[RMDB]
Structure probing data (2A3 and DMS) for a 177-nucleotide construct. The reactions ran in a buffer of 150 mM KOAc, 10 mM MgCl2 and 150 mM bicine (pH 8.5), at 24 C.

RNA sequence: GGGAACGACUCGAGUAGAGUCGAAAAGGUAAUACCGACUCCAAGAGUGUGUAUGAGAGAUGCUGCAGUUAAAAAGUCCGUAGUCAUAGAAGGGCAAAGAGAGAUGCGAGGUCUCACAGUGCGAUGAGAGGUAUGCUAUAUUCGUAUAGCAUACCUCAAAAGAAACAACAACAACAAC
Reactivity to 2A3 in 0.01 (KOAc 150mM, MgCl2 10mM, bicine 150mM(pH8.5), 24C), signal-to-noise 4, nucleotides 027 to 126: g070g010u060a050a070u090a190c010c020g000a020c010u030c050c020a080a030g080a000g020u070g010u050g010u050a060u170g090a090g000a000g010a030u080g040c020u010g040c040a050g020u150u200a060a100a040a060a010g030u010c010c010g040u030a010g050u040c010a010u030a120g080a090a090g060g020g040c060a020a110a000g090a020g010a000g000a000u030g050c080g040a040g010g040u000c000u000c020a010c040a060g030u050g040c070g020a060u070g050a090
Reactivity to DMS in 0.01 (KOAc 150mM, MgCl2 10mM, bicine 150mM(pH8.5), 24C), signal-to-noise 8, nucleotides 027 to 126: g020g010u020a080a070u030a300c050c010g010a080c070u000c010c040a130a100g000a080g000u010g020u010g000u010a060u010g020a100g020a050g010a040u010g010c050u010g010c020a060g010u010u020a040a060a060a110a120g010u000c010c020g000u030a120g020u020c110a070u020a090g010a100a090g000g020g000c020a030a070a060g000a080g000a060g000a060u000g010c070g000a100g010g010u010c020u000c020a050c120a080g010u010g000c060g000a090u020g000a210